An RNA of 207 nucleotides, treated with 2A3 and read out base by base. Values cover nucleotides 27 to 156. Conditions: 150 mM KOAc, 10 mM MgCl2 and 150 mM bicine (pH 8.5), 24 C.
[RMDB]
RNA sequence: GGGAACGACUCGAGUAGAGUCGAAAAGGAGGUUCGCCUCCAGAUGCUCCUAAGUCGUUUGCGUUUGACGGAGAAGGGAGCACGGUAUCGGAAACGAUACACGUGCGAAGAACUUCUCCCGAGCAAACGAUAUGGAAUAAUCGUAUUUCGAUACGAAAUUGUUUGGGCUUUUCGAAGCCCAAACAAUAAAAGAAACAACAACAACAAC
Reactivity to 2A3 in 0.01 (KOAc 150mM, MgCl2 10mM, bicine 150mM(pH8.5), 24C), signal-to-noise 1, nucleotides 027 to 156: g010g000a000g010g000u140u100c210g070c050c060u030c010c000a010g000a050u150g090c050u000c020c010u070a240a030g040u000c000g020u000u000u000g020c030g070u160u270u130g100a080c050g000g000a000g000a010a000g000g000g000a040g000c000a000c000g000g010u000a000u000c000g000g050a130a000a000c000g000a000u010a050c260a200c180g000u000g040c060g070a160a030g020a000a000c000u000u030c000u030c010c010c000g010a000g000c000a000a000a000c020g000a000u000a040u020g060g090a000a080u210a180a050u060c030g000u020a020u030u150u020c190g090a000u040a050c070g090a090a070